[RMDB]
RNA sequence: GGGAACGACUCGAGUAGAGUCGAAAAACGGAAGGUACGCCAUCCGACCAUUGGGUAGAAGCGUUCAAUCAGCACCGUGACGGUGCAGAUGGGAAAUUGCCCAUGAUACGCACCAUACGUGGUGCGAAAAAGCCAUCGGUGUUCGCACCGAUGGCAAGUAGAAGAAAGGGUUCGCCCUUUCUUCUACAAAAGAAACAACAACAACAAC
Reactivity to 2A3 in 0.01 (KOAc 150mM, MgCl2 10mM, bicine 150mM(pH8.5), 24C), signal-to-noise 7, nucleotides 027 to 156: a000c030g020g010a050a030g040g030u060a030c180g040c030c010a040u020c010c020g070a070c000c040a100u070u090g030g000g000u030a060g040a140a020g030c020g030u040u060c040a040a060u030c010a020g010c000a000c000c020g140u220g260a140c200g020g000u000g000c020a000g000a000u030g010g010g020a020a120a100u060u040g010c000c000c010a000u050g040a030u040a030c020g000c000a000c000c000a010u050a120c240g100u050g010g000u000g000c000g000a010a000a000a010a000g000c000c000a000u000c000g000g000u010g010u040u040c150g030c070a000c000c000g000a000u000g000g000c000a000a000
Reactivity to DMS in 0.01 (KOAc 150mM, MgCl2 10mM, bicine 150mM(pH8.5), 24C), signal-to-noise 3, nucleotides 027 to 156: a090c060g000g010a080a100g010g030u000a040c100g030c030c030a070u010c020c020g020a140c040c030a130u010u020g010g010g020u000a050g010a090a070g010c070g000u000u010c020a060a050u000c020a100g000c010a010c010c000g010u010g020a180c150g020g040u000g010c000a010g030a020u010g010g020g000a050a140a100u000u010g000c000c020c000a050u000g000a150u000a120c050g000c000a010c000c000a090u010a100c240g030u000g020g010u000g010c020g010a000a030a050a090a070g010c000c000a020u000c040g030g030u000g020u000u010c300g020c000a020c000c000g010a000u000g010g020c000a000a010
The data come from the RNA Mapping Database (RMDB), library M2RFPK. The record gives the reactivity of an RNA of 207 nucleotides to 2A3 and DMS. The 2A3 profile rests on 7,564 reads. The RNA was probed in 150 mM KOAc, 10 mM MgCl2 and 150 mM bicine (pH 8.5) at 24 C.